[RMDB]
RNA sequence: GGGAACGACUCGAGUAGAGUCGAAAAAUAAGGCUAAGUGGUGUAAAUGAAAAGGCAGCAGGGGAUCAAGUACUCCACGGAAAAUAACUCACGCUGUUGCCUCCGAUCUUUGGUCCAAUCUCCUUGAACAUCUUGGCCAUUACUUCCACAUCCUCCACUCAUGGUGGUGGUUCGCCACCACCAUGAGAAAAGAAACAACAACAACAAC
Reactivity to 2A3 in 0.01 (KOAc 150mM, MgCl2 10mM, bicine 150mM(pH8.5), 24C), signal-to-noise 2, nucleotides 027 to 156: a010u110a000a040g010g000c070u020a050a100g030u040g070g020u020g020u050a100a130a030u180g090a060a100a020a010g020g030c020a000g070c020a010g070g000g090g000a050u030c100a070a000g080u070a120c010u050c100c030a100c050g030g050a060a110a010a110u160a100a040c030u010c100a050c090g130c060u060g040u070u060g000c020c000u010c000c000g080a130u030c080u060u070u110g050g030u000c020c020a000a050u030c070u010c000c050u040u080g070a050a020c000a120u070c000u040u040g000g010c000c010a050u030u110a010c010u080u040c000c010a080c000a100u040c000c030u090c010c010a060
An RNA of 207 nucleotides, treated with 2A3 and read out base by base. Conditions: 150 mM KOAc, 10 mM MgCl2 and 150 mM bicine (pH 8.5), 24 C. The data come from the RNA Mapping Database (RMDB), library OK3TST.